[RMDB]
RNA sequence: GGGAACGACUCGAGUAGAGUCGAAAAGGGAGGUUGACUCCCCGGCACCAAAAGGCCCUGGCCCAACUAGGUGCUCAUCGAAUGAACACACAAGAGAAUGAAUGUAAGGUCAGCUGGUGGGACAGUGCAGUGAUGAGAUGUUCGCAUCUCAUUAUUGAAAAGAAACAACAACAACAAC
Reactivity to 2A3 in 0.01 (KOAc 150mM, MgCl2 10mM, bicine 150mM(pH8.5), 24C), signal-to-noise 9, nucleotides 027 to 126: g010g000g000a020g020g030u140u120g090a070c000u000c000c000c000c000g020g010c020a020c010c000a030a030a000a020g070g010c000c000c030u030g060g000c010c000c010a060a050c030u030a030g090g000u010g010c010u010c000a030u010c010g050a040a070u090g040a080a010c040a000c020a000c020a110a030g060a020g050a180a060u130g030a050a010u100g070u140a080a020g050g000u030c000a010g020c030u020g000g010u010g000g000g000a020c020a020g020u020g030
Reactivity to DMS in 0.01 (KOAc 150mM, MgCl2 10mM, bicine 150mM(pH8.5), 24C), signal-to-noise 9, nucleotides 027 to 126: g000g000g010a020g000g000u050u040g000a220c010u000c000c000c000c050g000g010c090a100c010c030a060a070a140a110g010g000c020c030c030u010g010g000c010c010c020a070a080c060u010a060g010g010u000g000c030u000c030a030u000c110g010a130a180u010g000a060a050c070a050c070a090c080a070a070g010a130g010a070a060u020g000a090a070u020g000u030a090a090g000g010u010c030a040g000c030u000g000g010u000g000g000g000a050c040a030g010u010g010
The data come from the RNA Mapping Database (RMDB), library OK1LIB. The record gives the reactivity of an RNA of 177 nucleotides to 2A3 and DMS. The reactions ran in a buffer of 150 mM KOAc, 10 mM MgCl2 and 150 mM bicine (pH 8.5), at 24 C. For DMS, 189,246 sequencing reads were counted. DMS adducts were read by reverse transcription with MarathonRT.